This 207-nucleotide RNA was probed chemically with 2A3. Reactivities are given for positions 27 through 156. It was measured as part of the RMDB library M2RFPK.
RNA sequence: GGGAACGACUCGAGUAGAGUCGAAAAGGACUGCGCAGUCCGGCAACAUCAGCAGAGAGCCCGCUAUACGUGACGUAUUGGCUGAAGCGUACAGAAAUAUUGAGCCUCCUGCAAGAGGCAGCCAAGCAAAACGUACGUGAGUUCGCUCACGUACGAAGGCGAAUACGUAGUUCGCUACGUAUUCGCCAAAAGAAACAACAACAACAAC
Reactivity to 2A3 in 0.01 (KOAc 150mM, MgCl2 10mM, bicine 150mM(pH8.5), 24C), signal-to-noise 1, nucleotides 027 to 156: g020g000a010c050u030g040c090g090c170a010g040u000c000c000g000g060c020a070a050c050a100u140c060a000g030c000a000g020a000g020a060g010c050c050c000g000c000u020a030u010a080c060g000u060g100a020c040g020u100a150u060u130g000g010c030u010g030a080a000g020c010g040u100a030c070a050g100a050a160a010u170a110u170u190g050a060g010c000c000u000c010c050u150g050c020a030a000g060a010g000g010c020a000g000c000c010a000a030g040c050a000a000a000a200c020g010u000a020c000g000u000g000a010g000u030u030c110g050c090u010c000a020c020g000u000a000c000g000a010a000
The reactions ran in a buffer of 150 mM KOAc, 10 mM MgCl2 and 150 mM bicine (pH 8.5), at 24 C.